[RMDB]
RNA sequence: GGGAACGACUCGAGUAGAGUCGAAAACGUCUCACCUGAAGAGGACAAAAGUCCGAAACGGUAUUAGUCUCAGUUCCUAGCUGACGGUUUGAGCCAAUCACGGUAAACAAAACCUUGCUUUCCUGUCGGUUACCUUCUACUUCGGUAGAAGGUAACCAAAAGAAACAACAACAACAAC
Reactivity to DMS in 0.01 (KOAc 150mM, MgCl2 10mM, bicine 150mM(pH8.5), 24C), signal-to-noise 1, nucleotides 027 to 126: c170g030u000c060u010c120a130c010c000u030g030a090a060g010a300g000g000a080c000a180a090a050a180g050u000c000c010g000a070a140a050c060g020g030u000a060u030u000a020g030u000c000u000c050a220g000u000u000c000c000u000a050g000c010u000g030a020c300g000g000u000u000u030g000a100g000c040c010a110a110u000c200a100c190g000g000u000a130a090a010c120a060a050a080a030c010c030u000u020g020c060u000u000u000c000c010u000g000u010c070
Reactivity to 2A3 in 0.01 (KOAc 150mM, MgCl2 10mM, bicine 150mM(pH8.5), 24C), signal-to-noise 1, nucleotides 027 to 126: c030g090u040c040u000c040a110c030c000u050g060a220a050g020a040g140g000a000c010a010a300a060a020g020u000c000c050g070a080a100a030c060g000g030u070a110u020u180a040g060u050c000u000c050a010g020u060u040c010c020u040a040g000c010u060g000a040c080g030g010u020u090u130g030a020g000c000c020a060a030u030c080a100c130g000g070u060a110a070a020c040a000a120a000a030c000c000u050u050g050c030u070u050u020c010c020u100g090u110c070